[RMDB]
RNA sequence: GGGAACGACUCGAGUAGAGUCGAAAAGGGGAAGUAGCUCAUAAUGUAGUAGGGUUGUAGUAUUGAUUUCCACCUGAUAAAGAAGUAUCCUUCAAAGAUGUAAAUUGGGUCUCUCACCCUCUGCUUACAGCAAAUACUGGUUCGCCAGUAUUUGCUGAAAAGAAACAACAACAACAAC
Reactivity to 2A3 in 0.01 (KOAc 150mM, MgCl2 10mM, bicine 150mM(pH8.5), 24C), signal-to-noise 2, nucleotides 027 to 126: g000g040g000g010a000a000g100u120a000g000c010u000c060a110u070a280a070u200g040u140a060g040u020a010g040g060g000u070u130g080u080a090g010u030a090u060u130g090a060u090u070u000c000c020a000c040c010u010g040a040u090a110a150a030g040a050a020g030u070a090u140c060c000u030u070c050a000a050a140g060a040u080g030u170a060a040a190u030u030g030g030g030u060c030u000c000u040c020a110c030c030c000u020c090u040g030c030u080u060a030
Reactivity to DMS in 0.01 (KOAc 150mM, MgCl2 10mM, bicine 150mM(pH8.5), 24C), signal-to-noise 3, nucleotides 027 to 126: g010g000g020g020a130a130g020u000a070g040c060u020c050a060u010a050a090u010g000u000a070g010u000a050g030g000g000u000u000g010u000a030g030u010a080u030u000g010a100u000u000u010c020c030a050c030c010u010g010a130u020a050a080a110g010a040a100g010u000a100u000c110c010u010u010c050a050a150a090g000a020u000g000u000a000a020a050u010u000g010g020g020u000c030u000c050u000c050a110c040c030c010u010c130u010g000c040u000u000a130

Source: RMDB library OK2TRN, as collected in RNAgym. This 177-nucleotide RNA was probed chemically with 2A3 and DMS. Reactivities are rounded to 0.1 and cut off at 0 and 3. The 2A3 profile rests on 972 reads. 2A3 adducts were read by reverse transcription with SuperScript II with manganese. The RNA was probed in 150 mM KOAc, 10 mM MgCl2 and 150 mM bicine (pH 8.5) at 24 C.